[RMDB]
RNA sequence: GGGAACGACUCGAGUAGAGUCGAAAACACAAGAUGGCCUAUAUAUUCUUUUGCAAGGUCAGAUUUCAUGGCAGAGCAGCGGUCAGACAUAUGAUUUAGAUGAGGGGAAUAUGCUGUUUUUGCGUCGAAGGGUCGUAUGUUUCGACAUACGACCCUUAAAAGAAACAACAACAACAAC
Reactivity to DMS in 0.01 (KOAc 150mM, MgCl2 10mM, bicine 150mM(pH8.5), 24C), signal-to-noise 1, nucleotides 027 to 126: c030a140c200a060a050g000a070u020g000g000c000c130u010a190u000a120u010a110u000u010c090u010u010u000u000g010c170a170a050g000g010u000c010a040g000a130u000u000u020c050a090u020g000g030c000a060g000a120g030c000a070g020c030g030g030u000c070a070g010a130c100a050u010a030u000g000a090u000u000u010a130g000a070u030g020a120g020g030g020g000a060a100u060a070u030g010c020u000g000u000u000u000u000u000g000c000g000u000c100g000

This 177-nucleotide RNA was probed chemically with DMS. The DMS profile rests on 841 reads. DMS adducts were read by reverse transcription with MarathonRT. Reactivities are given for positions 27 through 126. The RNA was probed in 150 mM KOAc, 10 mM MgCl2 and 150 mM bicine (pH 8.5) at 24 C.